[RMDB]
RNA sequence: GGGAACGACUCGAGUAGAGUCGAAAAAGAAAGAGCGUAUUCGCGUCUUGACGUGAAUGAGCCUAGACUGUAGGCUCUAGUGGGAUAGUAACGCUCACUCGCAAAACGCUAUUCCACAGUCAGUUAAUGCAGGAUGAUCAUUCGUGAUCAUCCUGCAAAAAGAAACAACAACAACAAC
Reactivity to 2A3 in 0.01 (KOAc 150mM, MgCl2 10mM, bicine 150mM(pH8.5), 24C), signal-to-noise 1, nucleotides 027 to 126: a000g220a040a030a010g010a000g020c020g030u050a060u020u000c000g000c000g040u000c060u150u160g100a000c000g070u050g010a040a040u140g000a010g000c060c000u030a090g090a300c130u100g080u170a000g010g000c000u000c000u010a000g000u010g000g000g000a000u010a000g030u010a090a010c000g000c000u090c030a060c010u000c030g060c100a040a150a000a000c090g000c000u000a010u000u030c010c020a020c000a010g090u100c030a030g000u090u130a070a080
Reactivity to DMS in 0.01 (KOAc 150mM, MgCl2 10mM, bicine 150mM(pH8.5), 24C), signal-to-noise 2, nucleotides 027 to 126: a100g090a040a130a100g000a010g010c000g010u000a120u000u010c020g020c010g020u000c050u000u010g030a040c020g000u000g000a010a040u020g020a010g010c010c000u000a060g000a130c170u000g010u000a030g000g000c000u000c010u000a050g010u010g000g000g000a030u000a000g000u020a080a070c010g020c000u000c010a100c050u000c030g000c160a070a050a050a090c240g000c000u000a010u000u000c000c010a010c000a130g010u010c080a080g010u000u000a060a100
Structure probing data (2A3 and DMS) for a 177-nucleotide construct. Values are in units of 0.01, from 0 to 300, in steps of 10. Conditions: 150 mM KOAc, 10 mM MgCl2 and 150 mM bicine (pH 8.5), 24 C. Source: RMDB library M2PK90, as collected in RNAgym.